[RMDB]
RNA sequence: GGGAACGACUCGAGUAGAGUCGAAAAGAGAUUCUGAAUGCGGUGGGGGCGGUGAGGGGCGGCGGAGAACUAGUGAACGCAUGCUUUGGGCUGCGCAUCUCAGAGCGCGUCGUCUGCGGCCCAUGCGUCAUAACAGUACUUUCGAGUACUGUUAUGAAAAAGAAACAACAACAACAAC
Reactivity to DMS in 0.01 (KOAc 150mM, MgCl2 10mM, bicine 150mM(pH8.5), 24C), signal-to-noise 3, nucleotides 027 to 126: g000a110g010a110u000u010c070u010g000a120a110u010g010c130g000g020u000g000g000g000g000g000c150g000g010u010g010a070g010g000g000g000c060g010g000c110g010g010a090g000a060a060c140u000a080g020u000g010a100a080c020g000c030a030u000g010c050u010u010u010g010g010g010c030u000g000c020g000c050a050u000c060u000c110a050g010a090g000c060g010c060g020u000c140g010u000c050u000g010c040g000g000c040c100c040a010u000g010c060g000
Reactivity to 2A3 in 0.01 (KOAc 150mM, MgCl2 10mM, bicine 150mM(pH8.5), 24C), signal-to-noise 4, nucleotides 027 to 126: g070a000g010a040u140u080c050u120g080a190a040u100g010c060g030g060u150g060g010g010g040g100c090g000g020u200g060a080g000g020g040g050c070g010g020c070g030g040a060g020a060a030c090u090a060g100u040g220a050a010c020g000c010a010u100g000c000u070u040u060g020g000g000c000u010g020c010g000c010a080u040c080u030c080a070g010a020g060c040g020c010g030u060c030g030u000c020u030g020c010g020g000c000c000c000a000u020g020c000g000